[RMDB]
The record gives the reactivity of an RNA of 177 nucleotides to 2A3 and DMS. As a SHAPE reagent, 2A3 marks flexible, mostly unpaired nucleotides at the ribose 2'-OH. Conditions: 150 mM KOAc, 10 mM MgCl2 and 150 mM bicine (pH 8.5), 24 C.
RNA sequence: GGGAACGACUCGAGUAGAGUCGAAAAUUUGGCAAUGCCUGGAGAUGUGUCUCAUUGUUAAAAUUUAGGAGGUGCUCCUGGCAUCAGAGUAGAAGCCAGGGAUGUAACUGAACAUCUUUUAGUACACACUCGUAUCGUAAUUCGUUACGAUACGAGUAAAAGAAACAACAACAACAAC
Reactivity to 2A3 in 0.01 (KOAc 150mM, MgCl2 10mM, bicine 150mM(pH8.5), 24C), signal-to-noise 3, nucleotides 027 to 126: u060u020u050g030g000c020a040a000u030g020c020c020u040g080g000a060g020a070u090g070u020g080u090c010u010c040a060u070u130g100u120u100a110a150a180a190u110u150u150a130g040g050a020g000g020u020g000c000u000c010c000u000g000g000c010a000u000c000a000g060a030g060u200a020g030a110a000g000c010c020a010g000g020g000a020u070g010u030a110a090c090u130g120a030a010c010a000u020c010u000u090u020u030a060g040u070a040c030a000c010
Reactivity to DMS in 0.01 (KOAc 150mM, MgCl2 10mM, bicine 150mM(pH8.5), 24C), signal-to-noise 5, nucleotides 027 to 126: u000u020u000g010g020c010a100a040u000g010c070c030u000g010g010a060g000a110u000g010u000g000u010c010u010c040a100u010u000g000u000u010a030a060a050a080u010u010u010a110g000g010a120g000g000u000g010c030u000c010c000u000g000g020c000a040u000c070a110g020a180g010u010a100g000a080a070g010c000c000a040g000g000g000a040u000g010u000a060a080c180u010g010a120a070c040a020u000c020u000u000u000u010a100g010u000a090c140a060c210